[RMDB]
RNA sequence: GGGAACGACUCGAGUAGAGUCGAAAAGCGCGGUGCCAACAUUGAGCACAACACCGAUUUUAGGAGGGGCAAUCUGUGCUAGAUGCGCUAUGUGGCCAAUGCCGCGGGCAGACAUCUCCGCUACUAGAUAACGGGUCUGUUCGGUACAGCGUAAAGAACUGGCACUACUGUUCGCAGUAGUGCCAGUAAAAGAAACAACAACAACAAC
Reactivity to 2A3 in 0.01 (KOAc 150mM, MgCl2 10mM, bicine 150mM(pH8.5), 24C), signal-to-noise 3, nucleotides 027 to 156: g000c010g000c000g040g040u100g000c010c000a020a020c010a090u080u120g050a020g020c030a020c010a060a040c010a030c000c050g090a100u020u040u040u290a070g020g050a040g030g040g000g000c020a000a030u030c020u040g000u000g030c000u040a040g050a100u040g000c050g000c030u040a150u070g040u020g040g030c040c080a090a080u230g010c020c000g060c010g010g010g000c010a010g030a050c000a130u080c060u010c050c020g040c030u020a020c020u030a090g150a300u060a100a050c010g040g000g020u000c000u010g010u040u010c020g000g000u040a030c060a020g000c030g050u070a110a000a020g080a020
Reactivity to DMS in 0.01 (KOAc 150mM, MgCl2 10mM, bicine 150mM(pH8.5), 24C), signal-to-noise 1, nucleotides 027 to 156: g030c010g030c040g030g020u000g000c000c030a090a040c020a080u010u030g010a060g020c020a050c020a040a050c000a000c050c040g010a200u010u020u000u000a060g060g000a110g020g040g000g000c080a100a050u000c080u000g080u000g010c020u000a140g020a190u000g000c000g040c040u000a040u000g050u010g000g000c010c100a060a070u000g000c020c020g040c010g060g000g020c010a030g000a040c000a090u010c090u000c040c010g020c000u000a020c030u000a210g050a300u010a000a050c050g000g050g020u020c010u010g000u010u000c000g010g020u000a010c040a080g000c010g020u000a100a110a120g000a120